Structure probing data (2A3 and DMS) for a 207-nucleotide construct. Conditions: 150 mM KOAc, 10 mM MgCl2 and 150 mM bicine (pH 8.5), 24 C. Values cover nucleotides 27 to 156. For DMS, 2,689 sequencing reads were counted.

[RMDB]
RNA sequence: GGGAACGACUCGAGUAGAGUCGAAAAGGGGUCGUGAGCUAGCAGCUGUGAACUCACGACAUGCUCUGAAGCCUCCACGGAGCAACAGCGUGAGGGAGCUGCUUGGACCUCACGACGGAGGCACCCAAAUCUUUGAACACUUCGGUGUUCAAAGAAACAUCUUAUUCGACUUCGGUCGAAUAAGAUGAAAAGAAACAACAACAACAAC
Reactivity to 2A3 in 0.01 (KOAc 150mM, MgCl2 10mM, bicine 150mM(pH8.5), 24C), signal-to-noise 5, nucleotides 027 to 156: g090g000g020g000u020c010g000u010g000a000g010c020u040a000g010c020a010g010c020u090g080u040g300a000a010c000u010c010a000c010g050a040c040a030u290g050c010u010c010u020g040a070a020g010c000c000u000c000c010a050c040g010g010a010g050c070a070a060c090a070g070c010g020u010g000a010g020g000g000a020g010c000u010g020c010u060u170g020g020a050c010c000u000c000a010c000g010a000c000g000g000a000g000g000c000a040c000c000c000a060a140a090u020c000u000u000u000g000a000a000c010a000c020u050u090c260g100g000u000g000u000u000c010a000a000a000g000a000a020a000
Reactivity to DMS in 0.01 (KOAc 150mM, MgCl2 10mM, bicine 150mM(pH8.5), 24C), signal-to-noise 1, nucleotides 027 to 156: g010g010g000g030u000c000g050u000g010a040g010c030u010a110g070c020a090g060c080u000g000u010g000a180a250c010u010c000a000c000g000a020c030a090u000g000c030u000c000u010g000a140a080g000c020c000u000c010c000a300c000g050g020a040g030c030a180a070c090a050g000c000g020u000g000a040g020g000g010a120g000c000u000g000c010u000u010g030g010a020c300c000u000c000a000c030g010a040c060g020g020a040g060g060c030a110c010c060c020a100a110a120u000c000u000u000u000g000a030a060c000a020c000u010u000c290g050g010u000g000u000u000c000a000a000a020g010a020a110a220